[RMDB]
RNA sequence: GGGAACGACUCGAGUAGAGUCGAAAAACUGGUGCGUCACCGAGUUCAUUCGCGUCAGCGAGCGGCUGUUGCCGGCUGCCACCUAUCACAAGCUGGCCCCCGAGUUGUUCAACGGCUCACGCACCCGCGUGAGGACUCCAUUCGUGGAGUCCUCACGAAAAGAAACAACAACAACAAC
Reactivity to 2A3 in 0.01 (KOAc 150mM, MgCl2 10mM, bicine 150mM(pH8.5), 24C), signal-to-noise 2, nucleotides 027 to 126: a010c050u050g000g000u010g010c000g010u010c010a020c040c000g010a010g010u020u060c030a050u050u010c000g000c020g050u040c010a010g000c030g050a030g030c010g000g000c020u050g110u300u180g130c110c060g070g030c000u020g060c000c030a150c010c060u180a170u300c110a040c060a200a040g000c010u010g000g010c000c030c020c020c010g010a050g030u010u150g010u080u040c030a170a120c020g010g000c090u030c040a000c010g000c000a010c000c010c000g120
Reactivity to DMS in 0.01 (KOAc 150mM, MgCl2 10mM, bicine 150mM(pH8.5), 24C), signal-to-noise 3, nucleotides 027 to 126: a120c060u010g000g020u000g020c010g000u000c170a080c010c010g020a140g000u000u000c040a100u000u000c020g020c110g000u010c120a060g010c010g010a070g010c060g020g010c030u000g000u010u010g020c130c060g020g010c010u000g010c030c070a080c080c080u010a070u020c180a100c120a100a110g030c030u010g000g010c000c030c060c180c050g010a050g000u000u000g000u000u000c030a070a090c040g000g030c080u000c120a040c020g010c030a050c010c020c170g020

Chemical mapping of a 177-nucleotide RNA with 2A3 and DMS.